[RMDB]
RNA sequence: GGGAACGACUCGAGUAGAGUCGAAAAAGGACAGUGUGCAGAUUGUUUAGGAUUAGGUUAUCAUCUAAUCGACCGGGCUUUCUAUGCAUUAGAGAAACGCGUAUGUCCAACGUGCUCAGGAUACCGAGGACACAUAGCGUUUCGACGCUAUGUGUCCAAAAGAAACAACAACAACAAC
Reactivity to 2A3 in 0.01 (KOAc 150mM, MgCl2 10mM, bicine 150mM(pH8.5), 24C), signal-to-noise 2, nucleotides 027 to 126: a020g090g000a020c040a010g070u020g010u030g090c010a020g010a060u050u050g100u050u110u180a080g060g020a030u010u010a010g060g030u020u120a120u160c180a010u050c020u000a010a020u020c020g030a000c020c030g060g000g000c050u080u070u000c040u040a060u080g040c030a020u040u140a080g050a000g100a080a140a060c070g060c030g050u050a080u080g010u000c010c000a000a020c010g040u020g010c040u060c060a040g040g040a090u040a110c000c040g030a020
Reactivity to DMS in 0.01 (KOAc 150mM, MgCl2 10mM, bicine 150mM(pH8.5), 24C), signal-to-noise 2, nucleotides 027 to 126: a090g000g010a050c050a060g030u000g030u010g020c070a020g010a070u000u010g000u010u000u000a110g000g020a020u000u000a000g020g000u010u000a110u030c240a030u010c050u010a020a010u010c040g020a140c130c120g000g000g010c050u000u000u020c000u000a020u000g010c040a030u020u000a070g030a180g010a020a080a060c070g010c020g000u010a050u000g000u000c000c030a090a230c260g020u000g040c030u000c120a080g000g000a090u010a080c010c010g010a300

The record gives the reactivity of an RNA of 177 nucleotides to 2A3 and DMS.
The reactions ran in a buffer of 150 mM KOAc, 10 mM MgCl2 and 150 mM bicine (pH 8.5), at 24 C.
The DMS profile rests on 1,596 reads.